The record gives the reactivity of an RNA of 177 nucleotides to DMS and 2A3.
It was measured as part of the RMDB library OK2TRN.
The RNA was probed in 150 mM KOAc, 10 mM MgCl2 and 150 mM bicine (pH 8.5) at 24 C.
For DMS, 727 sequencing reads were counted.
RNA sequence: GGGAACGACUCGAGUAGAGUCGAAAAUGAAUCAAGAAGAUGCUGCAAUCAGAACCACUACACUACCUGCCUCAGGAAUCUGCUCCAAGGUGAAGCUGAAAGAACAGAUGGUGUCAACAUUUUGAAAGGAACUGACGAUAUUCGUAUCGUCAGUUCCAAAAGAAACAACAACAACAAC
Reactivity to DMS in 0.01 (KOAc 150mM, MgCl2 10mM, bicine 150mM(pH8.5), 24C), signal-to-noise 1, nucleotides 027 to 126: u000g000a050a110u000c100a080a100g000a070a050g010a090u010g010c020u030g020c060a080a100u000c060a070g010a110a010c050c050a040c100u010a070c120a050c060u000a090c010c000u000g000c090c070u010c040a110g010g000a220a040u000c090u000g010c020u010c090c000a090a110g010g000u000g000a070a040g000c060u000g000a070a050a010g010a080a060c030a070g000a060u000g000g000u000g000u010c060a010a040c080a070u000u000u000u010g010a040a050a070
Reactivity to 2A3 in 0.01 (KOAc 150mM, MgCl2 10mM, bicine 150mM(pH8.5), 24C), signal-to-noise 1, nucleotides 027 to 126: u090g080a010a050u100c050a010a070g080a000a000g040a060u020g060c000u010g050c060a010a030u020c000a090g050a080a040c010c010a030c020u050a050c040a010c020u040a040c000c010u020g120c000c010u000c060a000g010g030a000a100u030c040u030g000c010u020c040c030a040a020g030g000u030g060a010a030g000c020u010g060a070a150a080g080a090a030c020a020g030a070u060g030g060u040g050u040c040a060a070c040a040u020u090u080u230g140a170a200a120